[RMDB]
RNA sequence: GGGAACGACUCGAGUAGAGUCGAAAAUGCAAACUAUCGUGGACACGGACCAGAUCCACCAAGACUUCGUCCGAAGUAUACUGCGGAUUCUCAUGAUCCAUGUAAUGUUGCUAUAGCACCGAAUUUACUACUAUGCAGUCUUCGGACUGCAUAGUAGAAAAGAAACAACAACAACAAC
Reactivity to 2A3 in 0.01 (KOAc 150mM, MgCl2 10mM, bicine 150mM(pH8.5), 24C), signal-to-noise 3, nucleotides 027 to 126: u090g010c010a060a000a000c010u040a030u200c020g020u010g000g000a010c020a020c120g040g000a020c000c040a040g020a090u020c000c010a030c030c060a080a050g030a030c020u050u020c060g210u070c190c190g000a010a000g000u050a060u010a060c070u080g040c040g010g040a030u120u050c060u000c020a050u090g030a140u000c020c010a010u020g000u050a050a090u180g010u040u020g000c030u040a020u060a150g040c040a040c030c030g030a020a040u120u120u080a110
Reactivity to DMS in 0.01 (KOAc 150mM, MgCl2 10mM, bicine 150mM(pH8.5), 24C), signal-to-noise 4, nucleotides 027 to 126: u010g000c030a060a030a040c040u000a150u000c030g060u000g020g010a020c040a060c140g010g010a090c300c190a130g000a070u000c000c000a020c070c230a170a120g000a050c010u000u010c050g000u000c240c190g000a020a020g000u000a050u010a190c140u000g010c050g010g000a040u000u000c110u000c040a050u000g000a100u000c000c000a010u000g010u010a140a150u000g000u000u000g000c000u000a100u000a080g000c140a260c020c010g010a040a040u000u000u010a160